[RMDB]
RNA sequence: GGGAACGACUCGAGUAGAGUCGAAAAUGAACUUAUCACAUGUUAUUGUGGAUAUCAAGAGGGCUUCAACCUUUCGUUUUAAGAGUUCUAUUCGAUCCUGGAAUGGGAAAAAUCUCUUCUCCACAGGGACGGAUGGAACGUUCGCGUUCCAUCCGUCAAAAGAAACAACAACAACAAC
Reactivity to 2A3 in 0.01 (KOAc 150mM, MgCl2 10mM, bicine 150mM(pH8.5), 24C), signal-to-noise 2, nucleotides 027 to 126: u230g000a050a010c010u130u130a050u230c020a010c030a020u100g160u270u260a300u300u040g000u060g080g100a000u020a000u210c060a020a020g010a020g130g030g000c130u240u110c030a130a300c000c000u270u260u080c040g070u030u030u030u030a100a130g000a000g040u000u000c000u000a020u000u080c000g070a060u070c000c000u000g000g090a020a090u060g110g000g050a060a110a030a040a050u050c020u000c000u080u000c030u010c000c020a030c010a070g000g000